[RMDB]
RNA sequence: GGGAACGACUCGAGUAGAGUCGAAAAAGAGCAUAAGAUAGGCUGACAGUGUCCUACACAACGAGGGACGCUGACGCGAAAGCGUGGUCUAGCGAACCAAUUAGGCUGCUUGAUGCGGCCAAUUGCUCGCACAGCCCGAUUUCGAUCGGGCUGUGCGAAAAGAAACAACAACAACAAC
Reactivity to 2A3 in 0.01 (KOAc 150mM, MgCl2 10mM, bicine 150mM(pH8.5), 24C), signal-to-noise 1, nucleotides 027 to 126: a000g000a000g000c060a070u120a000a040g010a000u000a000g040g000c000u090g070a260c010a000g000u000g000u060c000c000u010a000c060a000c000a060a300c160g200a300g010g000g000a000c000g000c000u000g070a000c120g010c000g000a200a000a000g000c100g000u000g000g000u060c000u100a070g000c010g000a000a010c000c000a000a000u000u000a190g000g030c000u000g030c000u190u140g210a300u300g000c000g000g000c000c070a000a000u000u000g000c000u000